[RMDB]
RNA sequence: GGGAACGACUCGAGUAGAGUCGAAAAGCUCUGUAAUGGGAUGGGAUCCGAAGCCCCAUUGAAGGAUAAUACAGGCUCUCCCAUCCAACUCCUAUUCCAACACGUCCUCGUCGUACAGAGUGGUAACUAAGGUAUAGCUCCUUCGGGAGCUAUACAACCCAGUUGAAAUCUUCGGAUUUCAACUGGGAAAAGAAACAACAACAACAAC
Reactivity to 2A3 in 0.01 (KOAc 150mM, MgCl2 10mM, bicine 150mM(pH8.5), 24C), signal-to-noise 1, nucleotides 027 to 156: g020c000u000c040u010g080u190a170a130u120g080g010g000a020u020g000g000g000a020u160c040c010g000a050a060g130c170c000c030c020a080u070u150g050a070a000g080g020a060u030a110a050u130a150c090a040g000g000c000u000c000u000c000c000c000a000u010c010c000a000a050c010u100c010c000u110a120u130u050c030c030a000a070c030a070c040g020u010c040c060u080c060g060u010c000g020u030a050c000a020g000a030g010u060g000g040u080a040a060c030u040a100a080g170g000u010a000u000a000g000c000u000c000c000u000u010c080g020g000g070a000g060c000u000a000u000a000c000a000a000